[RMDB]
RNA sequence: GGGAACGACUCGAGUAGAGUCGAAAAGUGCCGCUCUUCUCUAACUUGAUGGUAAUAGUGACCUCUGGCUCGCCAUACCCCGGCUCAAACGUCACAGUCGCGAUGUGUAUGGGGUUGAAGGGGCGGCUCCAUCCUCGAGAUUCGUCUCGAGGAUGGAAAAAGAAACAACAACAACAAC
Reactivity to DMS in 0.01 (KOAc 150mM, MgCl2 10mM, bicine 150mM(pH8.5), 24C), signal-to-noise 2, nucleotides 027 to 126: g000u000g000c000c000g030c020u000c010u000u010c080u000c020u000a070a110c040u000u010g010a070u020g030g010u000a140a160u010a140g000u010g000a050c010c000u000c080u010g000g000c100u000c120g030c030c010a050u000a110c000c000c010c000g010g000c030u000c100a040a070a130c130g010u000c130a070c140a020g000u000c050g000c100g000a120u010g020u000g020u010a060u000g010g000g000g000u000u010g040a040a050g010g010g000g000c020g010g010c010
Reactivity to 2A3 in 0.01 (KOAc 150mM, MgCl2 10mM, bicine 150mM(pH8.5), 24C), signal-to-noise 1, nucleotides 027 to 126: g120u050g010c000c030g030c030u030c020u050u010c000u000c030u050a090a100c030u030u050g060a080u170g060g060u090a180a080u180a230g150u090g120a010c000c010u020c020u030g010g010c050u030c000g090c000c000a010u020a010c020c030c010c020g000g000c000u040c090a190a170a080c100g090u060c100a010c010a060g040u110c040g020c070g080a080u050g070u000g010u070a160u080g020g010g010g000u000u060g000a020a000g000g000g100g000c020g000g000c030

Source: RMDB library OK2TST, as collected in RNAgym.
An RNA of 177 nucleotides, treated with DMS and 2A3 and read out base by base.
DMS adducts were read by reverse transcription with MarathonRT.
Conditions: 150 mM KOAc, 10 mM MgCl2 and 150 mM bicine (pH 8.5), 24 C.